[RMDB]
RNA sequence: GGGAACGACUCGAGUAGAGUCGAAAACGAUCAGUACGUUCGCGUACUGAUCGAAGCUACUGGAGACAGUAGCAAGUCUAAGACCUUGUUAGGCUAAAACAAGGAAAAAUGGAGGAAGGCCGGACCUCCAUACUUAGACAAUAGCCAACCGGCCAACAUGAUUAGUGGUGUUCGCACCACUAAUCAUAAAAGAAACAACAACAACAAC
Reactivity to 2A3 in 0.01 (KOAc 150mM, MgCl2 10mM, bicine 150mM(pH8.5), 24C), signal-to-noise 2, nucleotides 027 to 156: c020g000a000u000c000a000g010u000a000c010g040u070u090c240g000c010g100u000a000c010u010g000a000u000c000g010a000a000g000c000u010a000c000u000g020g000a040g000a030c010a000g020u000a000g020c000a000a010g000u000c000u010a010a020g010a210c000c000u000u010g000u040u050a100g100g160c140u160a090a110a000a050c000a000a000g000g010a060a100a100a040a020u050g000g000a000g000g030a160a190g020g000c000c040g120g010a260c010c000u000c000c000a000u010a010c000u000u000a000g000a000c020a060a140u120a050g070c020c000a020a020c000c000g000g000c000c000a000a010c040
Source information
The record gives the reactivity of an RNA of 207 nucleotides to 2A3. 2A3 adducts were read by reverse transcription with SuperScript II with manganese.